[RMDB]
RNA sequence: GGGAACGACUCGAGUAGAGUCGAAAACCAUGUUUUUCGAAACAUGGGGUAGUCCUAAGUCCGUUGAAAGAGCUUGUCAGUCCAUGGUCGGAAACGACCAUGGGACUUGGAUUUAGCUCUGGAGGAUAUGGAGUAGAUCGCUGAUUCGUCAGCGAAACUACCAAACAAGAUUCGUCUUGUUUGGUAGAAAAGAAACAACAACAACAAC
Reactivity to DMS in 0.01 (KOAc 150mM, MgCl2 10mM, bicine 150mM(pH8.5), 24C), signal-to-noise 5, nucleotides 027 to 156: c000c000a000u010g010u010u000u000u010u010c260g020a050a020a010c000a010u000g000g010g000g000u000a080g020u000c000c010u000a080a230g020u000c000c000g000u000u010g020a270a170a040g010a030g020c000u000u000g020u000c010a070g020u000c000c000a020u000g000g000u000c010g020g010a140a130a280c000g020a020c000c010a000u000g010g010g000a000c010u000u000g050g010a060u000u000u000a030g010c000u000c000u000g010g000a150g010g010a030u000a290u010g010g000a130g030u000a110g000a110u000c000g030c000u010g010a060u000u010c300g010u000c000a010g020c000g000a000a050a140
Reactivity to 2A3 in 0.01 (KOAc 150mM, MgCl2 10mM, bicine 150mM(pH8.5), 24C), signal-to-noise 2, nucleotides 027 to 156: c000c000a000u000g020u000u010u020u010u080c190g160a020a000a000c010a010u020g000g000g020g000u100a080g090u030c000c000u010a120a020g030u000c010c010g120u130u020g030a030a040a000g000a000g010c000u010u000g000u020c010a010g000u000c000c000a000u000g000g000u010c010g010g050a080a100a090c000g000a000c000c000a000u010g030g000g010a010c000u040u100g080g010a020u260u110u260a010g000c000u000c000u010g000g000a020g000g000a010u020a070u140g050g010a040g070u170a070g060a130u100c030g000c000u010g000a030u060u090c230g100u020c050a010g000c000g000a020a000a000